The data come from the RNA Mapping Database (RMDB), library RNAMAK. This 207-nucleotide RNA was probed chemically with 2A3 and DMS. For DMS, 3,762 sequencing reads were counted. For 2A3 the reverse transcriptase was SuperScript II with manganese.
[RMDB]
RNA sequence: GGGAACGACUCGAGUAGAGUCGAAAAAGAUCCAUUCGUGGAUCUAAAAAUCCUAAGUCCGUCGGAGGUACAUGCUCUUUGAUCUAUCGGAAACGAUAGGGAGAGCAGUGUACUACCCACCCGACGGAUAUGGAAAAAAUCGGCGUUCGCGCCGAAACACUCCAACAUAGUUCGCUAUGUUGGAGUGAAAAGAAACAACAACAACAAC
Reactivity to 2A3 in 0.01 (KOAc 150mM, MgCl2 10mM, bicine 150mM(pH8.5), 24C), signal-to-noise 4, nucleotides 027 to 156: a000g000a000u000c000c000a010u020u050c110g100u060g000g000a000u020c000u020a020a010a000a000a010u040c010c000u040a130a070g050u000c000c000g010u000c000g000g020a020g030g000u010a000c000a010u020g000c010u040c010u190u230u100g140a180u100c000u010a000u000c010g020g060a130a070a070c010g000a000u000a010g010g020g010a000g000a000g000c010a010g020u030g000u010a000c000u000a050c020c040c000a030c000c000c000g000a000c000g000g000a000u000a000u010g000g090a010a040a000a000a060a110u120c020g000g000c010g050u110u100c260g000c010g000c110c000g000a000a010a010
Reactivity to DMS in 0.01 (KOAc 150mM, MgCl2 10mM, bicine 150mM(pH8.5), 24C), signal-to-noise 2, nucleotides 027 to 156: a040g010a010u000c000c010a080u000u020c250g010u010g040g000a020u010c000u000a000a050a080a140a080u010c000c000u000a110a190g000u000c010c010g010u000c000g040g000a300g050g020u000a010c000a050u000g000c000u000c030u000u000u020g000a080u020c000u000a020u000c000g010g000a300a120a300c000g010a010u010a010g000g020g010a000g030a040g010c000a000g050u020g040u000a060c000u010a020c000c010c020a300c210c000c000g010a020c030g010g030a000u000a010u000g000g030a000a020a070a040a150a130u010c020g000g000c010g010u000u000c120g050c040g000c010c000g000a000a060a130

Record summary: The reactions ran in a buffer of 150 mM KOAc, 10 mM MgCl2 and 150 mM bicine (pH 8.5), at 24 C.